[RMDB]
RNA sequence: GGGAACGACUCGAGUAGAGUCGAAAACUUGUGCCCCUUGGCCCAUUUUCACAGCCCUGCCUGCCUGGCGCUGGAGGCCCAUGACAGAACUCUAUGCUGUGCCUUAUGUGCUGCCUGAGGAUGAGGAGAUCUUUCUGGUUUUCGAACCAGAAAGAUCAAAAGAAACAACAACAACAAC
Reactivity to 2A3 in 0.01 (KOAc 150mM, MgCl2 10mM, bicine 150mM(pH8.5), 24C), signal-to-noise 1, nucleotides 027 to 126: c030u070u080g040u080g130c000c000c040c000u040u120g030g000c000c000c000a040u030u080u100u040c180a120c020a030g000c010c030c050u040g070c000c000u030g030c000c000u030g060g000c070g000c010u040g070g030a040g020g000c000c010c040a070u100g020a050c020a040g090a110a020c040u030c010u120a080u130g030c020u020g050u070g080c010c020u130u050a080u140g090u090g020c030u030g040c000c000u030g050a030g030g010a060u080g040a040g080g000a140
Reactivity to DMS in 0.01 (KOAc 150mM, MgCl2 10mM, bicine 150mM(pH8.5), 24C), signal-to-noise 1, nucleotides 027 to 126: c100u010u020g010u000g040c030c000c050c070u010u000g000g050c010c030c030a130u000u020u000u010c070a120c110a020g030c040c040c040u000g000c000c020u000g040c050c050u000g000g020c110g020c020u010g000g000a070g010g020c030c040c030a030u020g010a130c060a050g010a100a150c060u000c070u010a110u000g010c070u000g030u000g010c040c030u000u010a070u000g050u000g000c050u020g000c040c050u000g010a070g000g000a060u000g020a080g000g000a270